[RMDB]
This 177-nucleotide RNA was probed chemically with 2A3 and DMS. The reactions ran in a buffer of 150 mM KOAc, 10 mM MgCl2 and 150 mM bicine (pH 8.5), at 24 C. 2A3 adducts were read by reverse transcription with SuperScript II with manganese. It was measured as part of the RMDB libraries RFM100 and RFMREP.
RNA sequence: GGGAACGACUCGAGUAGAGUCGAAAAUCACUUUUAAUCAUGAGAAAGAAAUUACCCACAUGGAGACAGCAGAAAAUGAGAAAGGAGAGAUCGUGCUGCGAAUAAUUCCAGCGAGUGCCAAGGGGCUACAUCAAGCAAUGUUCGCAUUGCUUGAUGUAAAAGAAACAACAACAACAAC
Reactivity to 2A3 in 0.01 (KOAc 150mM, MgCl2 10mM, bicine 150mM(pH8.5), 24C), signal-to-noise 6, nucleotides 027 to 126: u060c010a060c070u070u050u060u150a200a230u130c120a080u160g130a020g060a140a050a020g030a010a080a020u060u080a140c000c000c000a030c040a050u050g010g010a020g020a010c030a000g010c020a010g070a070a140a090a030u170g030a060g050a070a070a030g040g020a070g010a010g000a020u020c010g050u110g050c030u010g000c020g000a020a030u220a100a050u170u000c000c010a010g010c030g030a010g020u070g010c000c030a040a070g010g010g050g000c000u030
Reactivity to DMS in 0.01 (KOAc 150mM, MgCl2 10mM, bicine 150mM(pH8.5), 24C), signal-to-noise 3, nucleotides 027 to 126: u030c150a080c030u000u010u010u020a060a080u050c110a060u020g010a130g000a050a050a100g000a100a070a040u020u010a100c030c010c020a100c100a050u020g000g020a060g000a070c050a060g010c180a040g010a060a060a040a090u020g000a030g000a070a040a080g020g000a050g000a040g000a070u020c090g010u010g010c000u000g010c110g010a050a100u010a070a090u010u010c020c030a060g000c060g000a070g000u010g000c000c050a070a040g000g010g000g000c030u000